Conditions: 150 mM KOAc, 10 mM MgCl2 and 150 mM bicine (pH 8.5), 24 C. An RNA of 177 nucleotides, treated with 2A3 and DMS and read out base by base. The 2A3 profile rests on 1,016 reads. Values are in units of 0.01, from 0 to 300, in steps of 10. It was measured as part of the RMDB library RFM100.

RNA sequence: GGGAACGACUCGAGUAGAGUCGAAAAAUUCUACAAGAAGUUUUUAAUAGGAUGAUAUUUAACGCAUUCCCGUUAAUCGUCUGACUACGCUACUCAUCCUUUCCGCCUCAAAUUAACGUUCGUAAAAGUAACGUCGAGUAUUCGUACUCGACGUUACAAAAGAAACAACAACAACAAC
Reactivity to 2A3 in 0.01 (KOAc 150mM, MgCl2 10mM, bicine 150mM(pH8.5), 24C), signal-to-noise 3, nucleotides 027 to 126: a000u010u000c000u070a110c080a090a000g080a050a000g090u030u000u000u090u210a150a130u120a060g060g000a020u070g020a010u020a090u210u140u070a030a000c020g010c070a150u110u060c010c040c000g000u010u100a020a030u140c040g030u000c010u050g000a040c040u060a020c100g000c000u060a040c000u000c030a040u030c000c030u040u000u020c000c050g030c000c000u030c020a040a040a020u090u140a100a030c120g040u040u020c010g110u130a110a020a010a040
Reactivity to DMS in 0.01 (KOAc 150mM, MgCl2 10mM, bicine 150mM(pH8.5), 24C), signal-to-noise 1, nucleotides 027 to 126: a080u020u000c000u000a030c100a010a080g000a080a050g000u000u000u030u000u000a060a080u000a100g000g000a020u010g010a000u100a030u030u000u000a100a020c100g010c200a240u000u000c010c040c000g000u060u000a070a040u000c280g000u010c040u000g000a020c200u000a030c110g000c010u000a010c100u000c130a030u000c000c000u000u040u000c000c030g070c010c010u000c050a230a120a020u030u000a050a050c090g010u010u000c040g000u040a020a010a130a160